Chemical mapping of a 177-nucleotide RNA with DMS. Reactivities are rounded to 0.1 and cut off at 0 and 3. For DMS the reverse transcriptase was MarathonRT.
RNA sequence: GGGAACGACUCGAGUAGAGUCGAAAAGAUAUGGACUCCUACCAUCACGCUUCUUUGAUCGUGACGUAACAUCCAUCGGAAACGAUGGUGGUCACGGGAGAAGAUGUGAUGGUAGGAGUCCUAAGUCCAUUAAAACAACGUUCGCGUUGUUUUAAUGAAAAGAAACAACAACAACAAC
Reactivity to DMS in 0.01 (KOAc 150mM, MgCl2 10mM, bicine 150mM(pH8.5), 24C), signal-to-noise 6, nucleotides 027 to 126: g010a120u010a300u010g000g010a010c000u000c000c000u000a010c000c000a000u000c000a010c000g010c070u000u000c000u000u010u010g010a260u010c000g010u000g000a010c000g020u000a020a040c260a030u010c000c000a000u000c000g010g010a190a130a230c020g000a010u000g000g020u000g000g000u000c000a010c000g000g000g000a120g000a010a010g010a040u010g030u000g000a000u000g000g010u000a000g010g010a000g000u000c000c000u010a010a090g010u020c040